[RMDB]
RNA sequence: GGGAACGACUCGAGUAGAGUCGAAAACGCCUCUCUGUGACUAUAAAUUCCAGAAGUGAAUGCAAAAAUAUCAGUGGAAUCAGAGAAGACAAAGCGACUCAGCAAAUGUGUCUAAAAUUUUAAACGGCGCACAAUCAACGUUCGCGUUGAUUGUGCGAAAAGAAACAACAACAACAAC
Reactivity to 2A3 in 0.01 (KOAc 150mM, MgCl2 10mM, bicine 150mM(pH8.5), 24C), signal-to-noise 2, nucleotides 027 to 126: c190g090c000c000u000c010u030c000u130g000u000g060a000c120u160a190u130a130a300a150u010u000c000c020a000g030a300a030g240u160g120a130a000u070g010c080a260a000a000a050a000u090a000u100c070a070g100u060g180g000a000a000u230c000a130g000a000g010a160a000g000a060c030a030a030a030g030c000g050a040c040u020c160a000g090c070a000a000a250u050g070u000g000u100c000u030a110a190a210a140u000u020u080u120a260a300a000c090g120g100
Reactivity to DMS in 0.01 (KOAc 150mM, MgCl2 10mM, bicine 150mM(pH8.5), 24C), signal-to-noise 1, nucleotides 027 to 126: c300g050c000c000u110c000u000c000u000g000u040g000a300c050u010a050u000a050a210a050u000u000c000c050a270g000a230a140g120u180g080a000a000u000g000c250a000a020a240a060a100u070a040u040c300a130g070u000g000g000a000a000u000c010a000g070a020g000a120a000g000a100c000a000a140a020g000c000g020a000c000u000c020a210g000c070a090a110a050u020g000u000g000u000c000u000a180a040a040a000u000u000u000u000a150a150a180c230g000g000
The record gives the reactivity of an RNA of 177 nucleotides to 2A3 and DMS.
The 2A3 profile rests on 540 reads.
It was measured as part of the RMDB library OK1LIB.
DMS adducts were read by reverse transcription with MarathonRT.